Conditions: 150 mM KOAc, 10 mM MgCl2 and 150 mM bicine (pH 8.5), 24 C. Chemical mapping of a 177-nucleotide RNA with 2A3. The 2A3 profile rests on 384 reads. For 2A3 the reverse transcriptase was SuperScript II with manganese. Values are in units of 0.01, from 0 to 300, in steps of 10.
[RMDB]
RNA sequence: GGGAACGACUCGAGUAGAGUCGAAAACGUAGCGGCUUCCACCGAUGAGACACCCGCUGGAUGCGGCGGUGUACGAGGUAGGACAUCUGCUAUGUUGGAUUUUGAGCUGACGCGCGUGGUUGCUCUCGGUCAGCCGACCGUUCGCGGUCGGCUGACCAAAAGAAACAACAACAACAAC
Reactivity to 2A3 in 0.01 (KOAc 150mM, MgCl2 10mM, bicine 150mM(pH8.5), 24C), signal-to-noise 1, nucleotides 027 to 126: c000g000u020a000g000c030g000g010c000u000u000c000c000a000c000c000g080a170u030g150a180g000a060c000a000c000c030c000g000c020u050g140g160a230u300g090c050g000g000c190g020g010u010g000u000a020c030g000a070g060g000u080a110g260g050a010c000a020u010c000u000g000c000u010a000u000g040u000u010g000g110a090u110u000u080u150g000a030g030c080u080g000a020c000g020c000g020c050g100u100g000g110u110u200g020c070u140c010u080c000